Structure probing data (2A3 and DMS) for a 177-nucleotide construct.
[RMDB]
RNA sequence: GGGAACGACUCGAGUAGAGUCGAAAAACGCAGAAAUCGAGGUGAUGAAGAUGUACAUGCAACUGCCUGUGCAUGAGGGCGGAAUCAUCUCCCAUGUUCUGUCUGAGGGUGCGGUGUUCCAGCCAGGCCGAGUAGAGCGAUUCGUCGCUCUACUCGGAAAAGAAACAACAACAACAAC
Reactivity to 2A3 in 0.01 (KOAc 150mM, MgCl2 10mM, bicine 150mM(pH8.5), 24C), signal-to-noise 1, nucleotides 027 to 126: a000c030g010c020a000g000a030a040a050u170c110g020a050g070g030u000g000a020u030g020a010a030g010a060u140g010u060a010c000a010u040g010c030a210a250c070u130g010c000c030u050g000u040g000c000a020u020g050a130g100g070g060c020g000g020a020a020u010c010a000u000c020u070c030c010c010a090u190g080u040u080c030u030g100u070c090u040g040a090g030g090g000u090g000c030g010g060u020g080u020u030c010c020a000g080c010c010a010g020g100
Reactivity to DMS in 0.01 (KOAc 150mM, MgCl2 10mM, bicine 150mM(pH8.5), 24C), signal-to-noise 2, nucleotides 027 to 126: a070c180g000c020a020g040a020a050a010u000c170g000a020g040g020u000g000a020u000g000a120a150g000a080u000g020u000a070c030a040u000g000c000a080a110c110u030g000c050c100u000g030u000g000c000a010u000g010a150g000g000g000c030g020g020a290a060u000c050a010u000c000u000c000c060c100a170u010g010u000u000c010u000g010u010c190u000g000a170g020g000g010u000g000c090g010g000u000g000u000u010c000c070a120g000c000c040a100g000g010